Conditions: 150 mM KOAc, 10 mM MgCl2 and 150 mM bicine (pH 8.5), 24 C. Structure probing data (2A3 and DMS) for a 177-nucleotide construct. It was measured as part of the RMDB library OK1LIB.
[RMDB]
RNA sequence: GGGAACGACUCGAGUAGAGUCGAAAAAGCUCCCGGUGCUGCACGAGUUGGACAACAACAACAUCAUCGAGGGAGCGGCGCGGAGCAGUCGCAGCUCGGCGACCGACGUCCACAGCCUGAGCCGCGGAUCCUCAGUGGGGUUCGCCCCACUGAGGAUAAAAGAAACAACAACAACAAC
Reactivity to 2A3 in 0.01 (KOAc 150mM, MgCl2 10mM, bicine 150mM(pH8.5), 24C), signal-to-noise 3, nucleotides 027 to 126: a000g000c020u010c030c000c000g040g180u010g000c030u030g050c040a040c050g160a210g060u030u030g060g150a120c110a160a020c010a060a010c000a000a070c000a240u120c010a010u030c010g020a190g000g050g000a030g020c000g000g000c000g000c040g010g010a040g000c010a010g070u110c020g000c030a010g030c020u040c030g030g000c030g010a070c030c020g070a130c030g060u030c030c000a030c050a080g010c010c010u090g000a010g000c010c000g000c000g050g000
Reactivity to DMS in 0.01 (KOAc 150mM, MgCl2 10mM, bicine 150mM(pH8.5), 24C), signal-to-noise 2, nucleotides 027 to 126: a070g000c000u000c000c050c040g000g010u000g010c030u000g000c130a050c100g030a090g040u000u000g000g010a180c130a160a170c230a080a060c030a130a140c090a000u000c080a070u010c000g000a160g020g020g000a060g000c020g010g020c080g000c050g000g000a060g000c060a060g020u000c070g040c030a070g010c080u000c000g000g020c000g000a150c040c050g010a110c150g020u030c020c100a080c060a200g000c000c000u040g020a050g010c010c020g020c000g020g000
Values cover nucleotides 27 to 126. The DMS profile rests on 2,034 reads. The 2A3 profile rests on 1,888 reads.